This 177-nucleotide RNA was probed chemically with DMS and 2A3. The 2A3 profile rests on 1,493 reads. The RNA was probed in 150 mM KOAc, 10 mM MgCl2 and 150 mM bicine (pH 8.5) at 24 C. For 2A3 the reverse transcriptase was SuperScript II with manganese.
RNA sequence: GGGAACGACUCGAGUAGAGUCGAAAAAAAAUGGCUGUGAGGUACUACUGUCUUCACGCAGAAAGCGUCUAGCCAUGGCGUUAGUAUGAGUGUCGUGCAGCCUCCAGCCUCGAAAAACCGUCAGAAACAAGGUAGGCUUAUUCGUAAGCCUACCUUGAAAAGAAACAACAACAACAAC
Reactivity to DMS in 0.01 (KOAc 150mM, MgCl2 10mM, bicine 150mM(pH8.5), 24C), signal-to-noise 3, nucleotides 027 to 126: a050a040a040a070u000g000g030c010u010g010u010g030a020g020g000u020a100c270u020a290c130u000g000u000c030u010u000c000a010c030g010c000a000g000a110a090a260g010c000g010u000c010u000a050g040c230c280a130u020g000g000c000g010u000u000a060g010u010a060u000g000a040g000u000g000u000c030g010u000g000c000a000g000c020c000u000c000c010a010g000c000c000u000c080g000a040a070a050a090a120c010c030g010u020c100a080g010a170a030a130
Reactivity to 2A3 in 0.01 (KOAc 150mM, MgCl2 10mM, bicine 150mM(pH8.5), 24C), signal-to-noise 1, nucleotides 027 to 126: a000a000a000a020u110g000g000c040u040g120u120g090a000g020g010u060a050c070u040a020c010u080g000u030c000u000u000c000a000c020g050c000a000g000a000a000a000g000c000g000u010c000u050a040g080c090c040a050u090g000g000c000g010u010u000a000g000u000a000u000g020a030g020u000g020u010c010g060u150g110c010a010g020c020c000u010c000c000a000g000c000c020u010c010g050a080a040a000a000a000c010c020g090u120c040a030g120a180a090a030